[RMDB]
RNA sequence: GGGAACGACUCGAGUAGAGUCGAAAAGAUAUGGACUUACGUUAAACACAUCAUGGCAAGAGGAGUGGGUCGGAAACGACCCAUGGCCUUGAUGACCCAUGAGUGUGUUUAACGUAAGUCCUAAGUCCCGUCCUGUGAAGUUCGCUUCACAGGACGGAAAAGAAACAACAACAACAAC
Reactivity to DMS in 0.01 (KOAc 150mM, MgCl2 10mM, bicine 150mM(pH8.5), 24C), signal-to-noise 2, nucleotides 027 to 126: g030a180u010a140u000g030g000a030c000u000u000a010c010g010u000u000a000a000a030c010a000c000a040u000c000a010u000g010g000c010a100a060g010a010g000g050a300g000u000g000g000g050u010c020g000g010a110a110a300c020g000a010c000c000c000a010u000g000g000c020c020u010u020g040a030u010g010a050c300c000c010a010u000g000a070g020u000g040u000g010u000u000u010a010a020c030g000u000a000a010g010u000c000c010u000a000a060g000u000c010